This 177-nucleotide RNA was probed chemically with 2A3 and DMS.
RNA sequence: GGGAACGACUCGAGUAGAGUCGAAAAGAUAUGGACGUCCUCAGGUGAGUGGGAACUAUUCGGAAACGAACGAAUUCCCACCUGAAUCCUGGGACGUCCUAAGUCAAAAGCGUAGUUCGCUACGCAAGAUUGUGAAAUCGUUCGCGAUUUCACAAUCAAAAGAAACAACAACAACAAC
Reactivity to 2A3 in 0.01 (KOAc 150mM, MgCl2 10mM, bicine 150mM(pH8.5), 24C), signal-to-noise 3, nucleotides 027 to 126: g030a000u040a030u100g000g000a000c010g010u040c010c060u280c070a020g050g030u060g110a150g010u000g000g000g000a010a040c070u050a150u060u010c010g010g050a090a090a100c030g020a010a030c040g060a080a290u010u010c000c000c010a000c010c000u040g090a070a070u080c010c000u000g000g000g010a000c000g000u000c000c000u000a000a000g010u000c010a000a000a060a030g000c010g010u000a020g000u060u090c290g000c140u020a000c000g030c000a000a010
Reactivity to DMS in 0.01 (KOAc 150mM, MgCl2 10mM, bicine 150mM(pH8.5), 24C), signal-to-noise 4, nucleotides 027 to 126: g000a030u000a300u010g000g000a000c020g000u000c000c000u010c010a000g020g020u000g000a100g030u000g010g020g010a000a020c070u010a300u000u010c020g020g000a120a080a150c040g000a010a060c100g000a050a140u000u000c000c010c000a060c000c070u000g000a090a060u010c000c000u000g000g000g000a020c000g030u000c000c000u000a010a080g000u000c020a110a080a070a140g000c000g030u000a000g010u010u010c180g020c010u000a010c000g020c000a060a050

Values are in units of 0.01, from 0 to 300, in steps of 10. In probing experiments dimethyl sulfate is read out at A N1 and C N3, which are open when not base-paired. For DMS the reverse transcriptase was MarathonRT. It was measured as part of the RMDB library TTRDEL.